[RMDB]
RNA sequence: GGGAACGACUCGAGUAGAGUCGAAAAUGUGGUGACACCCCUCAGCCCUACCUGCGAAAGAAAAAAGUCAUUAGAAGGCGCCAGAGGAGACUGAGCGGUCGUCGUCGACGAAGGCUCCUCAGUCGCAUCAGUUAUUCUGGUUCGCCAGAAUAACUGAAAAAGAAACAACAACAACAAC
Reactivity to 2A3 in 0.01 (KOAc 150mM, MgCl2 10mM, bicine 150mM(pH8.5), 24C), signal-to-noise 2, nucleotides 027 to 126: u070g020u030g000g000u040g020a020c000a120c060c040c000c000u010c030a030g010c000c010c000u100a140c010c020u060g000c050g050a090a080a020g000a020a120a110a060a020a010g040u010c030a010u110u130a090g080a300a060g080g060c000g050c060c030a010g010a030g010g020a030g020a120c010u020g030a130g300c070g100g040u040c080g040u040c030g080u050c030g020a040c000g030a040a010g030g000c000u000c000c010u000c000a000g000u010c000g000c000a040
Reactivity to DMS in 0.01 (KOAc 150mM, MgCl2 10mM, bicine 150mM(pH8.5), 24C), signal-to-noise 2, nucleotides 027 to 126: u000g050u010g010g000u010g020a110c040a120c010c010c030c010u000c060a110g000c030c020c020u020a120c040c010u000g020c050g010a050a070a100g020a010a030a060a110a100a110g020u000c110a050u020u010a090g010a080a160g000g000c010g000c060c080a090g010a060g010g010a100g020a030c010u010g000a090g010c190g000g000u000c020g000u020c090g000u010c100g010a070c020g000a090a110g000g000c000u000c130c000u000c010a020g010u000c010g000c050a150